[RMDB]
The data come from the RNA Mapping Database (RMDB), library OK1LIB. The record gives the reactivity of an RNA of 177 nucleotides to 2A3 and DMS. Reactivities are given for positions 27 through 126. The DMS profile rests on 6,942 reads.
RNA sequence: GGGAACGACUCGAGUAGAGUCGAAAAUUACAUCUCUGGAAUACCUGCGAAUCAGCGAAGUGCCGUACGGGUAUUCACUCUUUGUGAGUUUAGGUGUUGGUGGCUGGCGCGCAUCGUACGAGGGUGGUAAGAACGUAGUCUUCGGACUACGUUCUUAAAAAGAAACAACAACAACAAC
Reactivity to 2A3 in 0.01 (KOAc 150mM, MgCl2 10mM, bicine 150mM(pH8.5), 24C), signal-to-noise 3, nucleotides 027 to 126: u160u050a020c020a050u020c060u000c030u130g070g040a030a030u020a040c000c030u030g050c070g050a120a100u140c030a050g030c010g080a220a060g060u070g110c030c030g050u050a020c050g020g040g000u020a030u030u030c000a000c000u090c050u050u200u170g140u080g050a040g010u040u120u100a070g010g050u030g010u060u070g010g010u000g020g030c010u010g000g030c020g000c000g010c040a050u040c030g000u000a040c060g010a070g000g000g050u070g020g060
Reactivity to DMS in 0.01 (KOAc 150mM, MgCl2 10mM, bicine 150mM(pH8.5), 24C), signal-to-noise 3, nucleotides 027 to 126: u010u040a060c100a080u020c010u000c030u000g000g010a050a080u020a040c010c010u000g010c090g000a090a100u000c080a080g000c060g000a120a100g020u040g000c090c030g030u010a130c050g010g000g020u010a010u000u010c010a110c030u010c090u030u020u010g000u000g010a040g010u000u000u020a070g000g010u000g010u000u020g020g020u010g000g020c020u030g000g000c230g000c040g000c030a030u000c050g040u010a060c090g000a080g000g000g040u000g010g030